Chemical mapping of a 207-nucleotide RNA with 2A3 and DMS.
Conditions: 150 mM KOAc, 10 mM MgCl2 and 150 mM bicine (pH 8.5), 24 C.
RNA sequence: GGGAACGACUCGAGUAGAGUCGAAAACAUCGGCCACUAGAGGUAUGUCGCUUGUCAUCGGUGCUGGUAUGGGCUACGGUAUCAAACAAGCAUCUGAAUUUAAUAACAGCAUGACUGCUACGCAGGCUCUUUUAGCUGACACUGUACCAGCUAGUCAGCUAUCACCUAAAUUCGUUUAGGUGAUAGCAAAAGAAACAACAACAACAAC
Reactivity to 2A3 in 0.01 (KOAc 150mM, MgCl2 10mM, bicine 150mM(pH8.5), 24C), signal-to-noise 9, nucleotides 027 to 156: c050a080u080c040g040g000c020c010a020c040u080a020g010a030g060g040u090a060u100g070u050c050g000c040u040u040g030u050c020a070u060c100g060g020u050g000c010u030g020g040u090a090u100g030g030g000c020u060a020c040g030g020u070a040u130c050a030a060a060c020a060a020g010c020a040u020c020u070g070a110a100u100u150u130a210a130u140a120a060c020a020g040c030a020u070g060a090c010u040g020c020u060a040c110g000c060a040g000g010c010u040c030u070u160u040u070a020g000c000u010g020a020c030a020c120u060g010u040a040c020c000a000g000c010u010a020g070u060c020a000
Reactivity to DMS in 0.01 (KOAc 150mM, MgCl2 10mM, bicine 150mM(pH8.5), 24C), signal-to-noise 3, nucleotides 027 to 156: c090a110u000c050g050g030c010c020a090c050u000a060g010a120g010g020u000a070u000g020u000c060g020c030u000u020g010u000c020a080u000c040g000g050u000g020c020u010g010g010u010a040u000g040g010g040c020u000a060c050g010g020u010a050u000c040a140a080a090c060a050a080g010c010a130u000c080u000g000a100a120u000u010u010a080a110u010a050a110c040a090g010c050a130u010g020a120c020u020g050c030u010a030c090g030c050a120g000g010c040u010c030u000u000u000u000a040g020c030u000g010a050c030a100c050u000g010u000a110c130c060a060g020c030u000a110g000u000c060a170